The record gives the reactivity of an RNA of 177 nucleotides to 2A3 and DMS.
[RMDB]
RNA sequence: GGGAACGACUCGAGUAGAGUCGAAAAAGGGCUGGAUUCGUCCAGCCCUGCACAUUCGUACGCAAGGAAGCGUACGUCAUUACGCAAAUGACGUAAAGCGUAGAACCACGGACUUCGGUCCGUGGAAACGUAUUGUGCACUUCGGUGCACAAUACGUAAAAGAAACAACAACAACAAC
Reactivity to 2A3 in 0.01 (KOAc 150mM, MgCl2 10mM, bicine 150mM(pH8.5), 24C), signal-to-noise 3, nucleotides 027 to 126: a010g010g010g000c010u010g000g000a030u030u020c110g040u050c020c000a020g000c010c010c000u020g000c020a020c000a070u080u070c000g030u010a010c000g020c010a050a110g300g100a130a100g080c020g010u000a000c000g000u000c000a030u000u130a030c040g000c090a080a080a240u130g080a040c060g090u090a010a140a050g000c030g020u020a010g020a110a050c000c000a000c020g030g000a000c010u030u080c300g100g000u040c010c000g000u000g000g000a020a000
Reactivity to DMS in 0.01 (KOAc 150mM, MgCl2 10mM, bicine 150mM(pH8.5), 24C), signal-to-noise 3, nucleotides 027 to 126: a020g010g010g020c000u000g000g000a020u000u010c230g020u000c000c000a010g020c000c000c000u000g010c110a080c130a060u000u000c030g020u010a000c010g020c020a120a150g010g020a130a090g020c030g020u010a000c010g000u000c080a030u000u000a050c110g000c070a070a070a040u000g000a060c080g010u000a030a070a070g000c010g000u000a040g000a100a250c000c000a000c000g030g000a010c000u000u020c160g030g000u000c000c010g020u000g000g000a000a020
The reactions ran in a buffer of 150 mM KOAc, 10 mM MgCl2 and 150 mM bicine (pH 8.5), at 24 C. The data come from the RNA Mapping Database (RMDB), library M2PK50. The DMS profile rests on 2,460 reads. Reactivities are given for positions 27 through 126.